Conditions: 150 mM KOAc, 10 mM MgCl2 and 150 mM bicine (pH 8.5), 24 C. Chemical mapping of a 177-nucleotide RNA with DMS and 2A3.
RNA sequence: GGGAACGACUCGAGUAGAGUCGAAAAGAUAUGGAUGGCAAUGCGAGGCAAGGAGGUCGGAAACGACUACCCACCCUUGCUACCCACCGCAGCCAUCCUAAGUCAAACAUGAGCUUCGGCUCAUGAACGGUGACAGAGAGUUCGCUCUCUGUCACCGAAAAGAAACAACAACAACAAC
Reactivity to DMS in 0.01 (KOAc 150mM, MgCl2 10mM, bicine 150mM(pH8.5), 24C), signal-to-noise 1, nucleotides 027 to 126: g000a150u000a180u000g000g070a000u000g000g030c000a220a150u000g000c010g010a090g000g000c000a000a000g010g000a020g030g000u000c000g050g010a110a080a090c050g010a000c010u000a140c000c040c030a300c140c000c000u000u000g000c000u000a010c010c010c130a300c090c030g000c040a010g050c000c000a010u030c000c010u000a010a030g000u000c020a150a130a150c030a000u000g000a000g030c000u000u000c030g000g000c000u000c000a040u000g000a010a150
Reactivity to 2A3 in 0.01 (KOAc 150mM, MgCl2 10mM, bicine 150mM(pH8.5), 24C), signal-to-noise 1, nucleotides 027 to 126: g090a010u220a060u300g000g000a030u020g030g000c090a300a110u070g020c000g000a020g000g030c030a000a010g030g000a020g000g000u010c020g000g000a090a110a010c050g020a030c000u110a200c010c010c020a050c000c050c010u000u000g010c000u050a050c050c060c000a080c050c000g000c020a000g090c030c000a000u010c000c000u010a000a040g120u090c070a130a090a030c030a020u000g010a000g030c020u080u100c300g180g000c000u000c000a000u010g000a070a030
It was measured as part of the RMDB library TTRDEL.